Chemical mapping of a 177-nucleotide RNA with DMS and 2A3. Source: RMDB library TTRINS, as collected in RNAgym. The RNA was probed in 150 mM KOAc, 10 mM MgCl2 and 150 mM bicine (pH 8.5) at 24 C. For DMS, 3,206 sequencing reads were counted. For 2A3 the reverse transcriptase was SuperScript II with manganese.
RNA sequence: GGGAACGACUCGAGUAGAGUCGAAAAGAUAUGGAGCCACCGAGCCAUCGAUCUAUGGUACUACUAGGUUUAUAUCGGAAACGAUAUAAACCUUAAAACCAUAGGGAGGCUCCGUGGCUCCUAAGUCCCUUAUCACAGAGUUCGCUCUGUGAUAAGGAAAAGAAACAACAACAACAAC
Reactivity to DMS in 0.01 (KOAc 150mM, MgCl2 10mM, bicine 150mM(pH8.5), 24C), signal-to-noise 3, nucleotides 027 to 126: g010a030u010a050u020g010g000a020g020c000c000a030c000c300g010a000g010c000c000a300u010c210g000a040u010c000u000a000u000g000g010u000a080c300u010a200c300u010a030g010g000u000u000u000a010u000a010u000c000g020g010a060a010a050c000g020a020u000a000u010a010a000a000c000c000u000u000a020a060a100a040c010c000a010u000a030g010g000g010a000g000g000c000u000c000c290g010u000g010g000c000u000c000c000u000a000a070g000u000c020
Reactivity to 2A3 in 0.01 (KOAc 150mM, MgCl2 10mM, bicine 150mM(pH8.5), 24C), signal-to-noise 1, nucleotides 027 to 126: g000a010u000a010u090g000g010a020g020c000c030a000c000c030g020a000g020c010c000a300u300c140g030a010u010c000u010a000u010g050g050u090a180c110u060a080c090u090a140g030g000u000u000u010a000u000a000u000c000g000g000a000a030a000c000g000a000u000a000u000a010a000a000c000c000u010u000a010a010a010a020c010c000a020u010a000g000g000g010a000g000g000c010u000c000c010g000u000g000g020c010u010c000c010u010a010a000g000u000c000